[RMDB]
RNA sequence: GGGAACGACUCGAGUAGAGUCGAAAACCGCGCAAGGUGCGCGCGGUACGUAUCGAGCAGCGCUCAACUCUGAAAAACAUCAAGACCAUGUGUCUCUAACUGUGCCACUCUGUGGUUCAGGAAACCUAAACGCCUCACUUCGGUGAGGCGAAAAGAAACAACAACAACAAC
Reactivity to DMS in 0.01 (KOAc 150mM, MgCl2 10mM, bicine 150mM(pH8.5), 24C), signal-to-noise 3, nucleotides 027 to 129: c000c020g070c030g090c040a160a070g020g060u070g000c110g020c010g000c010g000g020u050a030c130g030u020a040u060c050g020a120g050c060a000g020c130g070c060u000c130a080a110c130u020c000u060g010a000a000a000a000a000c080a140u040c190a070a020g080a000c050c040a090u040g040u010g040u000c010u040c060u010a040a090c010u040g040u040g020c000c000a020c030u090c200u050g030u000g020g050u050u000c010a010g010g050a030a000a060c100c020u020a080a100a100
Reactivity to 2A3 in 0.01 (KOAc 150mM, MgCl2 10mM, bicine 150mM(pH8.5), 24C), signal-to-noise 4, nucleotides 027 to 129: c000c000g010c000g010c030a070a050g170g000u090g070c020g000c000g010c010g000g000u000a030c050g050u040a060u120c030g050a000g010c050a020g050c030g000c020u030c050a020a070c020u020c040u080g110a060a060a020a030a000c050a060u120c040a060a020g010a030c020c000a050u070g090u040g030u050c010u000c000u040a080a060c000u000g000u050g010c030c010a010c000u240c110u250g040u000g000g000u040u000c010a010g000g060a060a050a030c020c010u050a040a080a030